Annotation: Structure probing data (DMS and 2A3) for a 177-nucleotide construct.
RNA sequence: GGGAACGACUCGAGUAGAGUCGAAAAGGCGGGGCGUUCGCGCCCCGCCAAAGUCGGUAUGCGUAAUAAUUAAUCGUACGCAUCGAUUAAUAUCGGACAUUAAAAGCCGAUCAUUCGUGAUCGGCAAUCGAUUUACUGUAUUCGUACAGUAAAUCGAAAAAGAAACAACAACAACAAC
Reactivity to DMS in 0.01 (KOAc 150mM, MgCl2 10mM, bicine 150mM(pH8.5), 24C), signal-to-noise 1, nucleotides 027 to 126: g080g150c010g100g110g040g230c030g130u010u000c200g030c050g070c030c010c010c000g080c000c000a000a000a080g030u000c010g000g000u020a030u000g010c000g060u000a040a090u000a050a100u010u020a120a090u000c210g020u000a040c000g010c000a000u000c010g020a080u000u000a030a090u000a130u010c050g000g000a050c100a130u000u000a100a110a080a200g020c000c000g020a010u000c000a020u000u020c090g010u000g000a030u010c000g010g000c000a000a020
Reactivity to 2A3 in 0.01 (KOAc 150mM, MgCl2 10mM, bicine 150mM(pH8.5), 24C), signal-to-noise 1, nucleotides 027 to 126: g000g000c000g120g170g050g060c000g030u030u060c140g120c010g070c130c000c070c000g000c000c000a010a020a000g000u010c030g000g060u130a010u040g000c020g000u010a010a000u100a110a060u240u260a100a140u170c140g010u020a000c020g020c000a000u010c000g000a030u000u080a080a040u100a030u190c070g060g010a030c050a000u130u150a060a040a100a130g000c000c000g030a000u000c000a020u080u090c170g030u030g000a000u000c000g020g000c000a000a000

It was measured as part of the RMDB library M2PK50. The reactions ran in a buffer of 150 mM KOAc, 10 mM MgCl2 and 150 mM bicine (pH 8.5), at 24 C. Values are in units of 0.01, from 0 to 300, in steps of 10.